[RMDB]
RNA sequence: GGGAACGACUCGAGUAGAGUCGAAAAGAUAUGGAGCAGAACUACAACCACUCACUGCCGAAGAACUCGGAAACGAGGGAGGCAGUGGAGUUGCUGCUCCUAAGUCAAAGUACGGUUCGCCGUACAAUCAGUUAUCUUGCUUCGGCAAGAUAACUGAAAAAGAAACAACAACAACAAC
Reactivity to DMS in 0.01 (KOAc 150mM, MgCl2 10mM, bicine 150mM(pH8.5), 24C), signal-to-noise 1, nucleotides 027 to 126: g010a020u010a300u010g000g010a010g010c000a000g010a040a010c040u010a230c060a010a030c070c080a170c160u010c010a000c010u010g010c000c020g000a090a160g000a080a120c010u000c010g000g010a100a070a160c020g020a020g000g010g000a080g000g000c000a010g020u000g000g010a100g000u000u000g010c000u010g020c010u000c000c010u010a030a140g010u000c010a110a070a120g010u000a000c000g010g020u000u040c260g000c000c000g000u000a020c000a050a150